[RMDB]
Chemical mapping of a 177-nucleotide RNA with DMS and 2A3. It was measured as part of the RMDB library M2PK90. For DMS the reverse transcriptase was MarathonRT. As a SHAPE reagent, 2A3 marks flexible, mostly unpaired nucleotides at the ribose 2'-OH.
RNA sequence: GGGAACGACUCGAGUAGAGUCGAAAAAAGUUGCACCAGGUACGGAUACCAGACGUUGCCAAACAGGGUGACAUGAGGAUCACCCAUGUACUGUCCCUAGGCAGCCGUACCUGGUGCUGGUGAAAAACAUAGUAGCGAACUUCGGUUCGCUACUAUGAAAAGAAACAACAACAACAAC
Reactivity to DMS in 0.01 (KOAc 150mM, MgCl2 10mM, bicine 150mM(pH8.5), 24C), signal-to-noise 4, nucleotides 027 to 126: a060a080g020u010u000g010c010a010c010c000a000g000g010u000a010c000g010g000a120u000a070c040c020a180g010a050c120g010u000u000g000c100c060a090a080a060c080a030g000g000g000u000g000a010c020a100u020g010a120g030g010a180u000c070a030c000c000c000a030u010g010u000a070c110u000g000u000c010c060c040u000a230g000g000c040a060g020c000c000g000u000a010c000c000u000g000g000u000g000c000u000g010g010u020g010a040a060a080a070a130
Reactivity to 2A3 in 0.01 (KOAc 150mM, MgCl2 10mM, bicine 150mM(pH8.5), 24C), signal-to-noise 3, nucleotides 027 to 126: a000a020g240u080u050g010c010a010c010c000a000g000g000u000a010c000g010g030a070u060a110c020c020a030g060a090c050g110u110u050g080c020c020a080a150a080c070a050g000g000g000u010g010a010c020a050u250g120a170g120g040a120u070c040a120c030c000c000a000u030g020u020a050c050u030g050u070c000c000c010u010a080g020g010c000a000g010c000c000g020u000a000c010c000u000g000g010u000g000c000u010g000g040u100g060a120a040a000a010a000